Description
This 177-nucleotide RNA was probed chemically with 2A3. For 2A3, 525 sequencing reads were counted. The reactions ran in a buffer of 150 mM KOAc, 10 mM MgCl2 and 150 mM bicine (pH 8.5), at 24 C.

RNA sequence: GGGAACGACUCGAGUAGAGUCGAAAAUUUUGGCGUUUCACUUGCUUCACUCGCAAUCAAUCAACGUAAAAAUACCGCUUAGACUGGGUGGGGUCGGGUGAUAAGCGGAGCGAGUCCAAACUGAAUCCGCCCGGUAAUGAUUCGUCAUUACCGGGCGAAAAGAAACAACAACAACAAC
Reactivity to 2A3 in 0.01 (KOAc 150mM, MgCl2 10mM, bicine 150mM(pH8.5), 24C), signal-to-noise 1, nucleotides 027 to 126: u100u090u020u110g090g010c060g010u060u100u070c070a010c020u020u060g030c020u070u010c030a070c070u030c000g120c090a030a080u050c000a000a080u040c030a000a060c070g090u180a090a030a040a040a040u180a070c030c000g050c050u030u020a100g010a190c100u070g110g000g000u140g040g080g040g050u140c080g040g060g040u060g030a080u100a060a000g000c000g000g000a050g000c010g050a020g100u060c000c000a100a000a000c040u060g000a000a110u060c000